[RMDB]
RNA sequence: GGGAACGACUCGAGUAGAGUCGAAAAGGAUCUCUGUAUAGUGUGAAUAUCUAGCUCUGAAACACAAAAGAGAAAGCUACAAAGGGCAACGUAACAAAAGCCGUAUUCCCACCCAAGGAUUAGCACAUGUGAAUGAUAGUUUCGACUAUCAUUCACAAAAAGAAACAACAACAACAAC
Reactivity to 2A3 in 0.01 (KOAc 150mM, MgCl2 10mM, bicine 150mM(pH8.5), 24C), signal-to-noise 2, nucleotides 027 to 126: g010g060a100u020c020u000c010u020g020u060a170u030a250g000u020g010u020g030a060a050u010a040u160c080u080a080g040c060u010c020u110g070a040a160a000c050a000c000a000a060a070a020g020a010g000a050a130a010g020c010u080a060c030a060a200a050g020g030g000c030a080a000c060g020u070a090a010c040a050a150a000a010g030c000c020g000u040a110u010u080c010c010c000a010c000c000c010a040a020g090g000a090u050u080a050g010c080a030c010a170
Reactivity to DMS in 0.01 (KOAc 150mM, MgCl2 10mM, bicine 150mM(pH8.5), 24C), signal-to-noise 4, nucleotides 027 to 126: g010g020a080u000c010u000c010u000g020u010a110u010a120g030u010g010u010g000a120a100u010a030u000c070u020a090g010c060u000c050u020g000a240a150a070c060a050c120a070a120a120a020g000a050g000a040a110a130g000c030u000a050c090a120a090a090g000g010g010c070a040a040c070g020u000a110a080c090a070a050a110a100g010c020c010g000u010a120u000u010c000c030c010a140c040c060c040a100a070g010g000a070u000u000a040g010c080a090c200a080

Source: RMDB library OK2TST, as collected in RNAgym. An RNA of 177 nucleotides, treated with 2A3 and DMS and read out base by base. For DMS, 2,652 sequencing reads were counted. DMS adducts were read by reverse transcription with MarathonRT. For 2A3 the reverse transcriptase was SuperScript II with manganese.